[RMDB]
RNA sequence: GGGAACGACUCGAGUAGAGUCGAAAACUCCUGGAGUAAUGAAGGCUGCUUUUUUCGUUACACCCUUCCCCGGCAGCGCCGGUGGCAGUGUUCAGCCCUUUUCCGGGCAAACUGCUGCCAGUCUGUCCACAAUUAGGGAGUUCGCUCCCUAAUUGUGAAAAGAAACAACAACAACAAC
Reactivity to 2A3 in 0.01 (KOAc 150mM, MgCl2 10mM, bicine 150mM(pH8.5), 24C), signal-to-noise 2, nucleotides 027 to 126: c050u020c000c030u050g020g070a080g020u030a050a000u040g010a020a030g090g060c080u030g210c200u190u180u060u040u030u050c020g050u030u040a000c030a110c020c000c030u020u040c010c010c000c020g000g020c000a000g000c010g010c040c030g000g000u020g010g010c000a000g000u020g130u180u190c100a020g000c000c000c010u050u200u230u070c100c040g010g000g010c020a050a000a000c000u000g010c000u000g010c000c000a010g000u000c010u010g010u010c000
Reactivity to DMS in 0.01 (KOAc 150mM, MgCl2 10mM, bicine 150mM(pH8.5), 24C), signal-to-noise 2, nucleotides 027 to 126: c160u010c040c050u000g020g010a140g010u010a020a010u000g000a060a040g020g010c200u000g000c110u000u000u000u000u000u000c040g010u000u000a040c040a260c050c010c070u010u000c000c010c000c050g030g010c000a000g000c260g020c020c080g020g050u000g000g010c010a010g010u000g000u000u000c240a200g000c010c010c000u000u000u000u010c240c180g010g020g010c020a010a190a020c010u010g000c000u000g020c010c010a030g010u000c000u010g020u000c020